[RMDB]
Source: RMDB library OK3TST, as collected in RNAgym. Structure probing data (2A3) for a 207-nucleotide construct. Values cover nucleotides 27 to 156. For 2A3, 758 sequencing reads were counted.

RNA sequence: GGGAACGACUCGAGUAGAGUCGAAAACCAUUCUCUGAUCUUUUCUGGUGAAGCUAAUCCUAUUUGAAGUGCAUCAAAAUUAUUUAAUUCAAACAAGGGUAUAUCCUCCCUUCGAAAAUUAAUGUUCAUCGUUGAAAUCAUCUAGCUGUAAUCCCUACGACGACUAAAAUUUCGAUUUUAGUCGUCGAAAAGAAACAACAACAACAAC
Reactivity to 2A3 in 0.01 (KOAc 150mM, MgCl2 10mM, bicine 150mM(pH8.5), 24C), signal-to-noise 2, nucleotides 027 to 156: c010c000a010u090u020c030u030c010u030g120a160u040c020u010u130u130u000c030u030g030g010u060g030a010a020g020c010u010a060a060u050c010c010u070a100u080u060u040g070a090a010g040u040g070c020a030u060c060a050a150a060a110u080u070a050u010u060u050a080a080u070u040c050a030a000a170c030a020a010g090g030g040u110a140u030a080u230c020c000u000c020c010c000u040u040c010g030a110a000a000a000u080u090a030a150u060g020u020u130c010a060u060c110g050u030u070g020a090a090a060u060c050a050u020c050u040a040g000c020u020g000u080a070a090u070c010c010c000u050a020
Conditions: 150 mM KOAc, 10 mM MgCl2 and 150 mM bicine (pH 8.5), 24 C. 2A3 adducts were read by reverse transcription with SuperScript II with manganese.